[RMDB]
RNA sequence: GGGAACGACUCGAGUAGAGUCGAAAAUCCGUUGUCCGGAGGGUGGUCAUGCCUCGUACCCCACGUCUGGUGCCACUUGACCCGUCCAGCAGGUCCAGUUAUUGGAGGGUCUCAAGGGGACCUUCUCGCUUAUUCAGCAGUUCGCUGCUGAAUAAGCAAAAGAAACAACAACAACAAC
Reactivity to DMS in 0.01 (KOAc 150mM, MgCl2 10mM, bicine 150mM(pH8.5), 24C), signal-to-noise 2, nucleotides 027 to 126: u000c020c010g020u000u000g030u010c040c050g000g000a090g000g000g010u000g000g000u000c070a090u000g000c040c010u000c060g040u000a160c040c030c010c050a170c140g000u000c050u010g000g020u010g030c010c050a050c030u000u000g000a070c040c040c020g000u010c020c030a060g000c080a110g010g020u010c040c050a100g000u000u000a120u000u000g000g000a170g000g000g000u010c070u010c050a050a060g000g010g000g030a040c010c010u000u000c020u000c170
Reactivity to 2A3 in 0.01 (KOAc 150mM, MgCl2 10mM, bicine 150mM(pH8.5), 24C), signal-to-noise 1, nucleotides 027 to 126: u080c000c000g010u100u160g070u070c070c000g030g050a050g030g050g020u060g020g030u060c020a030u180g000c010c020u030c050g000u040a090c060c020c000c000a050c010g100u030c080u080g020g050u060g150c020c010a180c000u050u020g030a060c050c010c050g080u010c020c030a030g080c030a010g120g010u000c060c010a080g040u210u100a180u100u150g020g000a030g010g000g000u030c030u020c040a080a070g080g000g000g010a010c020c000u000u000c060u000c040